[RMDB]
RNA sequence: GGGAACGACUCGAGUAGAGUCGAAAAGGGUGAGACCUAGGAACCGUAGGGGUAUUCUCAAAGGAAGCUUUUGCAGUGACGCCCAUGUAAGUGGGAUAUAACAACAGAAUUCGUAUGAGUAGCCUAAUAAAUCGGACCUUCUUCGGAAGGUCCGAAAGAAAAGUAGUUUCUUCGGAAACUACUUUUCAAAAGAAACAACAACAACAAC
Reactivity to DMS in 0.01 (KOAc 150mM, MgCl2 10mM, bicine 150mM(pH8.5), 24C), signal-to-noise 1, nucleotides 027 to 156: g000g010g060u000g030a190g000a090c040c030u000a170g000g000a090a030c040c060g040u000a080g020g040g020g000u010a060u010u000c020u000c020a060a070a180g030g020a080a050g010c150u020u020u010u010g010c020a110g020u010g020a230c070g010c000c030c000a050u000g030u010a050a100g080u000g000g040g010a080u000a020u000a190a130c050a090a120c050a100g000a080a140u000u000c020g030u020a130u000g020a040g040u000a070g000c020c010u040a040a030u000a020a070a160u000c000g000g020a020c000c000u000u000c010u020u000c290g040g020a040a020g020g020u000c000c010g020a000a020a070
Reactivity to 2A3 in 0.01 (KOAc 150mM, MgCl2 10mM, bicine 150mM(pH8.5), 24C), signal-to-noise 2, nucleotides 027 to 156: g030g000g020u040g030a090g050a070c020c010u070a080g040g150a060a030c080c040g060u090a010g010g010g010g050u040a030u140u110c050u050c040a080a060a020g050g000a030a020g040c020u020u000u120u070g030c070a030g020u020g050a030c080g000c000c010c010a000u070g070u080a120a110g020u010g000g000g010a010u020a020u020a080a040c040a010a000c010a040g100a080a190u090u050c000g040u070a070u070g040a020g030u040a000g020c010c010u020a160a100u080a150a100a050u040c000g000g000a000c000c000u000u000c010u000u000c110g080g000a000a000g010g020u000c010c000g000a000a000a010